[RMDB]
RNA sequence: GGGAACGACUCGAGUAGAGUCGAAAACUAGCGCAAUUAAUUUUAAUGUUGAAGACCACAUUUAUUGGGGCGUGGAAAAUGAAACGUACGAUAAAGGAGGAGGGCAUUUAUCGGGAUCGUAAGUUUGUGUAUGUCACGGAUUCGUCCGUGACAUACAAAAAGAAACAACAACAACAAC
Reactivity to 2A3 in 0.01 (KOAc 150mM, MgCl2 10mM, bicine 150mM(pH8.5), 24C), signal-to-noise 3, nucleotides 027 to 126: c090u060a040g070c030g000c040a080a160u080u170a040a070u070u100u050u140a070a030u080g010u030u130g080a100a020g040a050c050c060a030c040a040u100u160u050a070u080u120g060g000g030g000c020g000u050g010g040a060a030a000a040u140g040a030a110a000c030g040u030a000c000g040a040u080a070a050a020g050g010a040g050g000a030g010g000g040c010a000u010u010u010a150u050c000g000g000g040a010u090c010g030u070a010a070g030u010u060u080g100
Reactivity to DMS in 0.01 (KOAc 150mM, MgCl2 10mM, bicine 150mM(pH8.5), 24C), signal-to-noise 2, nucleotides 027 to 126: c030u050a100g020c120g010c140a050a090u020u040a070a090u040u020u020u010a060a060u000g000u010u000g040a140a140g020a180c120c030a060c070a150u010u000u000a130u010u000g000g000g000g020c070g000u060g000g020a060a050a040a030u030g000a040a060a040c040g000u020a070c030g040a030u020a040a030a050g010g010a070g000g000a100g000g000g020c030a070u010u010u010a080u000c030g010g020g000a110u000c040g020u000a010a080g010u020u000u000g030
This 177-nucleotide RNA was probed chemically with 2A3 and DMS. 2A3 adducts were read by reverse transcription with SuperScript II with manganese. High 2A3 reactivity points to a flexible backbone, as in loops and unpaired stretches. Reactivities are given for positions 27 through 126.